[RMDB]
RNA sequence: GGGAACGACUCGAGUAGAGUCGAAAAUGACGGGAAACAAAACUAGGUAAAAUCUACAGUACACCACAAGGGUCACAAUACUGUUGUGCGCACAUCGCGGUAGGGCGUGGAAAGGGGCAGGCCAGAGCUACCCGCAGAGUUCUCAGAAUCAUGCUGAGUAUGCAAUCAUGUUCGCAUGAUUGCAUACAAAAGAAACAACAACAACAAC
Reactivity to DMS in 0.01 (KOAc 150mM, MgCl2 10mM, bicine 150mM(pH8.5), 24C), signal-to-noise 1, nucleotides 027 to 156: u000g030a080c040g070g050g000a130a120a220c030a030a060a060a150c060u000a100g030g050u010a070a070a080a080u000c010u000a070c010a120g020u010a100c050a060c030c020a020c030a070a170g010g130g000u010c000a070c090a060a190u000a040c080u010g030u000u000g020u010g010c080g000c030a010c010a040u000c030g000c050g020g050u010a060g020g010g010c040g060u010g020g000a020a090a100g000g050g050g020c090a060g010g030c000c040a110g000a070g030c030u010a040c070c040c000g000c060a030g020a300g020u000u020c010u000c020a110g010a060a060u000c050a030u000g000c010u000g000a240
Reactivity to 2A3 in 0.01 (KOAc 150mM, MgCl2 10mM, bicine 150mM(pH8.5), 24C), signal-to-noise 3, nucleotides 027 to 156: u090g020a040c010g070g000g000a040a060a040c040a030a110a050a030c050u070a060g000g090u080a040a080a040a120u070c020u070a040c020a000g040u010a030c020a020c060c010a010c040a140a100g070g000g000u060c040a020c000a100a060u110a100c020u090g050u090u070g010u020g020c070g040c040a050c010a100u120c120g010c020g060g020u040a060g010g020g010c050g010u030g000g050a040a050a040g020g020g000g040c020a000g020g040c020c010a000g000a000g020c030u050a060c000c030c010g000c050a010g030a020g090u040u020c010u020c030a030g060a060a040u130c040a020u110g010c000u000g010a010
Annotation
Chemical mapping of a 207-nucleotide RNA with DMS and 2A3. The 2A3 profile rests on 1,622 reads. For 2A3 the reverse transcriptase was SuperScript II with manganese. The DMS profile rests on 2,115 reads. The reactions ran in a buffer of 150 mM KOAc, 10 mM MgCl2 and 150 mM bicine (pH 8.5), at 24 C. It was measured as part of the RMDB library OK3TST.